[RMDB]
About this RNA:
Structure probing data (DMS) for a 177-nucleotide construct. The data come from the RNA Mapping Database (RMDB), library M2PK50. For DMS, 949 sequencing reads were counted. The RNA was probed in 150 mM KOAc, 10 mM MgCl2 and 150 mM bicine (pH 8.5) at 24 C.

RNA sequence: GGGAACGACUCGAGUAGAGUCGAAAACCCUGGAACUUCGGUUCCAGGGCAUGGUGCAAAUCCCCCGCUGAAACGGAGCGAUAUCCCUCCCAAAAAUAUAAAAAGCUGAUGAUUUCGAUCAUCAGAAUAUUCAAAACAGGUUCGCCUGUUUUGAAUAAAAAGAAACAACAACAACAAC
Reactivity to DMS in 0.01 (KOAc 150mM, MgCl2 10mM, bicine 150mM(pH8.5), 24C), signal-to-noise 1, nucleotides 027 to 126: c000c000c000u000g000g020a020a000c000u010u020c130g020g030u000u000c000c000a010g000g000g010c020a010u000g000g020u000g000c220a080a120a130u010c050c000c020c010c000g000c010u000g000a070a190a090c050g000g010a030g000c090g000a110u000a100u000c020c000c030u010c010c010c010a000a090a070a090a100u000a100u010a060a110a100a080a070g030c010u010g000a000u000g000a000u000u000u010c210g000a020u000c010a030u000c010a000g010a040a090